[RMDB]
RNA sequence: GGGAACGACUCGAGUAGAGUCGAAAAGAAUUCAAUAACAUUGUCGCGCCACUGGCAGAGUGGGAAGCGACAAACCACCUGGAACAACUUAGUGACAGACCUCUACUGCUGUGGCAUGGCCUCGACGGCAGUCGGACUGAUUCGUCAGUCCGACUGCAAAAGAAACAACAACAACAAC
Reactivity to DMS in 0.01 (KOAc 150mM, MgCl2 10mM, bicine 150mM(pH8.5), 24C), signal-to-noise 1, nucleotides 027 to 126: g000a180a070u130u000c050a000a000u040a100a040c220a240u000u000g060u000c000g000c060g000c020c000a000c000u020g000g030c110a040g040a020g000u050g000g020g000a080a040g020c000g000a000c000a010a000a090c160c090a050c020c000u010g000g000a060a120c010a070a020c160u000u200a110g030u000g000a230c160a070g000a060c090c020u000c040u000a010c000u000g000c000u000g000u000g000g000c070a100u000g010g020c000c050u010c040g000a220c140g000
Reactivity to 2A3 in 0.01 (KOAc 150mM, MgCl2 10mM, bicine 150mM(pH8.5), 24C), signal-to-noise 4, nucleotides 027 to 126: g080a020a080u250u230c160a020a180u140a170a050c110a220u120u020g000u000c000g020c070g080c060c000a000c010u080g110g000c080a030g010a010g120u020g000g040g040a100a050g000c000g050a010c000a010a000a020c040c000a030c010c000u020g020g040a070a020c040a050a090c110u140u300a040g000u000g080a040c000a010g020a050c000c010u080c030u090a130c000u040g030c000u010g000u020g050g000c010a020u090g040g010c080c010u120c170g090a060c050g020
Structure probing data (DMS and 2A3) for a 177-nucleotide construct.
Reactivities are rounded to 0.1 and cut off at 0 and 3.